[RMDB]
RNA sequence: GGGAACGACUCGAGUAGAGUCGAAAAGCCUAUGAAGUGGUGAAGGCCAUGUUACUUAAAAAGGAGCCACUUCUCUAUGUGCCCAUCCGGCUGGCUGGACACACUAGACACCUCCCAGGUCCUCGUGAUACGAAACCGUUCGCGGUUUCGAAAAGAAACAACAACAACAAC
Reactivity to DMS in 0.01 (KOAc 150mM, MgCl2 10mM, bicine 150mM(pH8.5), 24C), signal-to-noise 6, nucleotides 027 to 129: g040c000c000u030a090u040g020a040a010g000u010g050g030u050g030a130a060g000g000c070c080a100u000g020u060u040a070c120u070u040a060a090a050a100a080g000g000a300g000c040c010a050c110u000u020c050u020c100u040a080u050g030u000g060c060c040c010a000u000c000c000g000g090c130u060g000g090c120u020g050g020a000c060a000c070a120c210u000a080g010a090c210a030c040c010u020c000c010c090a120g020g040u020c010c030u020c000g020u040g030a090u040a100
Reactivity to 2A3 in 0.01 (KOAc 150mM, MgCl2 10mM, bicine 150mM(pH8.5), 24C), signal-to-noise 6, nucleotides 027 to 129: g030c000c000u060a090u110g020a020a000g010u020g000g000u050g060a090a040g090g020c000c030a080u100g070u130u200a150c060u110u200a060a080a030a030a020g100g000a020g010c000c000a000c000u030u010c000u000c010u000a080u070g040u030g000c010c000c000a030u020c020c030g240g000c190u120g020g000c000u020g000g000a010c010a010c000a010c070u000a000g020a030c050a030c050c010u060c000c000c010a030g030g010u010c000c010u030c020g080u100g040a070u050a160

The record gives the reactivity of an RNA of 170 nucleotides to DMS and 2A3. Conditions: 150 mM KOAc, 10 mM MgCl2 and 150 mM bicine (pH 8.5), 24 C. The DMS profile rests on 15,839 reads. Reactivities are rounded to 0.1 and cut off at 0 and 3. The data come from the RNA Mapping Database (RMDB), library 15KLIB.